Conditions: 150 mM KOAc, 10 mM MgCl2 and 150 mM bicine (pH 8.5), 24 C. An RNA of 207 nucleotides, treated with 2A3 and DMS and read out base by base. For 2A3, 1,255 sequencing reads were counted. The data come from the RNA Mapping Database (RMDB), library OK3TST.

[RMDB]
RNA sequence: GGGAACGACUCGAGUAGAGUCGAAAACAGCUUGGUGAACAAAUUGCUGCUGCUAGCCAGCAGGGCAUUCUUGCUCAAGAUUGCUUGAAAUUAGAAAGCCAGUAUGAUGCUGACACUCUAAUUUGGGGUGACUCUAAUAGUUUAUAGAUAAGCACCCAAUGUUUGUGUUCUUCGGAACACAAACAUUAAAAGAAACAACAACAACAAC
Reactivity to 2A3 in 0.01 (KOAc 150mM, MgCl2 10mM, bicine 150mM(pH8.5), 24C), signal-to-noise 3, nucleotides 027 to 156: c010a010g010c010u060u050g040g040u080g160a110a050c040a030a100a080u080u060g020c000u030g020c000u000g000c010u030a030g210c110c070a000g000c010a000g020g000g000c000a000u060u000c030u060u040g040c010u000c030a020a030g040a180u050u110g030c010u050u090g060a000a070a050u010u010a000g020a020a030a010g010c020c000a000g020u080a170u250g200a110u280g020c000u010g020a010c000a020c070u010c010u020a050a050u090u040u110g000g000g020g020u040g120a210c000u000c010u040a090a180u020a050g050u080u090u110a120u010a030g050a020u090a070a000g010c000a020c000c000c000
Reactivity to DMS in 0.01 (KOAc 150mM, MgCl2 10mM, bicine 150mM(pH8.5), 24C), signal-to-noise 1, nucleotides 027 to 156: c040a100g020c060u000u000g010g030u020g000a050a090c060a010a040a150u000u010g000c030u020g010c030u010g000c000u000a160g000c100c120a300g000c050a120g000g000g010c020a010u000u000c080u000u020g020c030u030c020a100a130g000a130u020u000g020c010u000u030g020a070a060a000u000u010a030g000a020a060a080g020c010c000a020g030u000a090u020g000a220u010g020c000u010g010a040c010a110c090u000c010u010a010a020u000u000u000g020g000g030g010u000g020a140c020u000c070u010a070a220u000a170g020u000u000u000a180u010a080g030a140u000a080a070g020c050a070c020c010c000